[RMDB]
RNA sequence: GGGAACGACUCGAGUAGAGUCGAAAAUAGACUACAUUGACGAAAGUGAGGUUUUGACUCCAGCUGAUUGGACACAUCACAUUGAGAAGCAUAACUUCAAGGUGCCAUUUGUUUGCGGUGCCAAGGAGUGCGCUAUUAUCUUCGGAUAAUAGCGCACAAAAGAAACAACAACAACAAC
Reactivity to DMS in 0.01 (KOAc 150mM, MgCl2 10mM, bicine 150mM(pH8.5), 24C), signal-to-noise 1, nucleotides 027 to 126: u040a050g020a070c030u050a000c070a070u000u010g010a040c060g000a060a110a040g000u000g040a150g000g010u000u000u010u000g010a060c020u000c020c090a080g000c110u000g010a050u000u010g000g020a070c140a020c090a040u000c070a060c080a150u000u000g010a110g010a020a040g020c090a020u010a040a070c020u000u000c040a040a270g020g000u000g010c020c020a090u010u010u000g040u000u000u010g000c090g060g050u000g010c000c050a030a170g000g000a100
Reactivity to 2A3 in 0.01 (KOAc 150mM, MgCl2 10mM, bicine 150mM(pH8.5), 24C), signal-to-noise 1, nucleotides 027 to 126: u070a000g080a010c020u030a060c050a080u050u120g060a010c020g120a130a020a020g040u020g020a060g030g030u060u090u000u210g050a060c030u000c000c020a010g130c050u080g030a110u010u120g090g020a030c020a000c000a060u050c040a020c010a030u080u130g060a010g030a090a000g050c020a150u070a050a050c020u000u000c030a050a000g030g000u000g000c000c000a110u090u110u080g290u070u010u090g100c140g000g020u000g000c030c000a000a010g040g000a020
Structure probing data (DMS and 2A3) for a 177-nucleotide construct. The reactions ran in a buffer of 150 mM KOAc, 10 mM MgCl2 and 150 mM bicine (pH 8.5), at 24 C. For DMS, 791 sequencing reads were counted.